[RMDB]
RNA sequence: GGGAACGACUCGAGUAGAGUCGAAAAUGCGUUUUCGAACGCAACACUGCCGAGGUAGCAUAGCUUGGCCAAUGCGGUUGCUUCGAGAGCAACGUUCCACACGGACUCAGGAGUUCAAAUCUCCUCCUCGGCGCCAUAUCACUCGAUUCGUCGAGAAACUCAUUCAAAUGUUCGCAUUUGAAUGAGUAAAAGAAACAACAACAACAAC
Reactivity to 2A3 in 0.01 (KOAc 150mM, MgCl2 10mM, bicine 150mM(pH8.5), 24C), signal-to-noise 9, nucleotides 027 to 156: u060g000c020g010u020u010u030u100c180g070a010a000c020g000c000a010a020c110a030c080u160g000c000c000g000a000g000g010u080a030g010c050a100u040a070g020c060u100u110g080g010c040c040a060a040u100g030c040g080g030u030u000g000c000u050u180c170g200a210g020a000g080c010a020a010c020g080u140u040c050c000a050c020a010c100g040g020a040c020u040c110a020g000g000a000g010u110u100c010a030a040a050u020c000u000c000c000u010c000c000u000c010g010g020c000g010c010c020a100u140a060u230c080a060c030u010c000g020a020u080u050c120g010u020c010g070a010g000a100a030
Reactivity to DMS in 0.01 (KOAc 150mM, MgCl2 10mM, bicine 150mM(pH8.5), 24C), signal-to-noise 3, nucleotides 027 to 156: u000g000c020g020u000u000u000u000c190g020a050a040c030g070c000a040a080c060a070c040u020g030c000c010g000a040g020g010u000a090g000c030a110u000a110g010c040u000u000g030g020c030c030a070a050u010g030c030g000g030u000u010g010c000u000u010c080g000a220g000a050g010c020a030a050c010g020u000u000c040c170a080c080a060c090g020g020a030c030u000c050a050g020g000a040g030u000u000c150a070a190a160u000c000u010c020c000u010c030c000u000c010g010g030c000g010c050c040a050u010a060u000c080a150c030u000c000g020a100u000u000c110g000u000c000g010a030g010a090a050